[RMDB]
RNA sequence: GGGAACGACUCGAGUAGAGUCGAAAAACGGCGGAUCACGGAUACGUCCGUGAUCCGCCGAAGCGAUGACGAAUGAUAUCUGCUCUAAUGAGUCUGAAUCCCCAUGUUGAGAUCUUAUCUGAGCUAAUAUACUCAACAAGUUCGCUUGUUGAGUAUAAAAAGAAACAACAACAACAAC
Reactivity to 2A3 in 0.01 (KOAc 150mM, MgCl2 10mM, bicine 150mM(pH8.5), 24C), signal-to-noise 1, nucleotides 027 to 126: a000c030g070g010c090g000g000a080u040c010a000c000g000g000a000u070a060c210g040u000c000c060g040u000g020a060u080c000c040g000c050c000g000a000a040g010c020g140a050u080g000a140c070g020a230a080u110g020a040u000a260u050c010u010g010c000u000c000u000a170a170u220g000a000g000u000c030u120g000a020a030u010c010c000c000c000a040u190g020u010u000g030a070g030a160u070c100u070u070a070u110c130u270g010a020g110c000u070a050a060

Source: RMDB library RFM100, as collected in RNAgym. This 177-nucleotide RNA was probed chemically with 2A3. 2A3 adducts were read by reverse transcription with SuperScript II with manganese. For 2A3, 421 sequencing reads were counted. Conditions: 150 mM KOAc, 10 mM MgCl2 and 150 mM bicine (pH 8.5), 24 C.